[RMDB]
RNA sequence: GGGAACGACUCGAGUAGAGUCGAAAAUCCCUGAGUUCCUCGGAUGUCCAGGCCGUCCCCUCUUCUAGAGAAGGGAGACUCCGGAACUUCUUCCAUGAUUGGGACGAAGCCGCCACCGGGCGCUCCCUAGCCCGUCGCUUCGGCGACGGGAAAAGAAACAACAACAACAAC
Reactivity to DMS in 0.01 (KOAc 150mM, MgCl2 10mM, bicine 150mM(pH8.5), 24C), signal-to-noise 2, nucleotides 027 to 129: u040c000c040c000u000g000a140g010u080u000c020c000u040c000g030g050a060u060g020u070c050c060a090g010g050c050c000g000u010c000c050c000c000u040c000u080u000c080u080a280g000a040g020a140a000g000g000g000a010g000a100c000u000c000c010g000g000a210a150c030u020u020c050u000u030c010c040a050u020g000a160u090u070g000g040g000a030c100g050a020a020g070c300c060g010c200c170a100c050c060g040g000g020c100g000c010u040c010c010c030u000a120g000
Reactivity to 2A3 in 0.01 (KOAc 150mM, MgCl2 10mM, bicine 150mM(pH8.5), 24C), signal-to-noise 1, nucleotides 027 to 129: u010c020c000c000u000g080a100g000u010u010c000c000u010c000g040g000a040u020g080u060c030c050a000g010g040c040c000g140u000c000c000c000c000u040c020u050u000c010u090a030g010a010g050a110a070g010g000g020a000g000a070c000u000c010c000g020g000a020a020c000u000u000c020u030u000c000c010a060u090g030a250u140u270g030g000g000a020c050g010a040a030g090c090c040g050c050c010a070c000c000g020g010g050c120g010c000u000c000c000c000u000a010g020